RNA sequence: GGGAACGACUCGAGUAGAGUCGAAAAAGUGUCUCCAGGCAUUAUCAAACAUCCCGUGGGAGGCAGAUCAACCCAGUUGAGAACCACAGCAAGUAAGACAAGGUGGCAGUCUAGGUUGUGGUUGUGUGGGACCAACUUGGACGUAUUUUAGGAACAAGGUCAUAGCAUAUUUCGAUAUGCUAUGACCAAAAGAAACAACAACAACAAC
Reactivity to 2A3 in 0.01 (KOAc 150mM, MgCl2 10mM, bicine 150mM(pH8.5), 24C), signal-to-noise 3, nucleotides 027 to 156: a000g090u040g010u000c010u010c050c010a030g080g000c030a090u060u150a190u300c140a150a110a060c010a110u070c000c030c030g140u090g040g020g000a010g000g010c020a020g050a130u100c040a020a100c000c000c010a000g010u040u120g040a130g020a040a000c000c020a000c010a010g010c010a080a070g050u160a070a020g040a070c100a130a040g050g000u030g030g060c030a010g010u010c020u030a060g130g000u020u000g040u000g000g050u030u020g020u010g000u030g040g020g000a020c000c010a010a030c020u040u030g000g040a040c020g090u080a170u050u200u070u150a090g010g010a080a070c080a180a050
Reactivity to DMS in 0.01 (KOAc 150mM, MgCl2 10mM, bicine 150mM(pH8.5), 24C), signal-to-noise 2, nucleotides 027 to 156: a110g000u000g020u010c010u010c030c030a130g030g000c070a100u000u020a130u010c090a120a070a090c060a120u000c030c010c020g000u000g000g010g000a050g020g010c020a060g000a100u010c050a100a150c010c000c010a100g000u000u000g000a100g010a150a090c150c010a070c030a080g040c040a060a130g000u020a110a070g020a090c030a050a130g030g010u010g020g000c070a110g000u000c020u000a070g030g030u000u010g030u000g030g010u000u000g010u010g000u030g000g010g000a110c070c020a030a070c060u010u000g010g020a190c100g030u000a090u000u000u000u000a120g030g020a040a060c040a140a190

An RNA of 207 nucleotides, treated with 2A3 and DMS and read out base by base. For 2A3, 2,221 sequencing reads were counted. Source: RMDB library OK3TST, as collected in RNAgym.